[RMDB]
RNA sequence: GGGAACGACUCGAGUAGAGUCGAAAAAAGGAGGCCGUUUUAUGUGCGAGUGUAAGAGUAAUUAAAACUCCGACGCGUAUUGAAAGAAAGAAUAUUCCGAAAGAUCGUUGCUACGGUAACCUUCUGUUCAUUUACUUCAAUUCGUUGAAGUAAAUGAAAAAGAAACAACAACAACAAC
Reactivity to DMS in 0.01 (KOAc 150mM, MgCl2 10mM, bicine 150mM(pH8.5), 24C), signal-to-noise 8, nucleotides 027 to 126: a070a060g000g000a070g000g010c030c020g000u000u000u010u010a070u020g030u010g010c020g000a080g030u010g010u010a120a100g010a030g010u000a050a130u040u060a100a090a100a040c010u000c000c070g000a100c120g010c020g010u010a020u020u010g020a060a050a080g010a070a040a080g010a100a090u020a110u000u000c030c030g010a080a070a090g000a050u010c090g010u000u000g000c040u010a070c080g010g000u000a040a090c070c050u000u000c020u000g000u000
Reactivity to 2A3 in 0.01 (KOAc 150mM, MgCl2 10mM, bicine 150mM(pH8.5), 24C), signal-to-noise 9, nucleotides 027 to 126: a000a000g030g000a010g030g000c020c010g010u020u020u030u030a180u130g060u030g000c020g010a030g060u090g010u060a080a020g020a010g040u070a080a180u220u160a070a080a030a030c000u000c000c010g020a040c030g000c000g010u050a030u070u100g110a120a060a050g080a050a080a010g110a070a030u110a110u140u050c040c020g050a080a050a010g050a050u050c030g030u090u160g010c040u060a030c030g030g010u020a050a100c000c020u020u020c010u020g030u000
An RNA of 177 nucleotides, treated with DMS and 2A3 and read out base by base. The data come from the RNA Mapping Database (RMDB), libraries RFM100 and RFMREP. 2A3 adducts were read by reverse transcription with SuperScript II with manganese. Conditions: 150 mM KOAc, 10 mM MgCl2 and 150 mM bicine (pH 8.5), 24 C.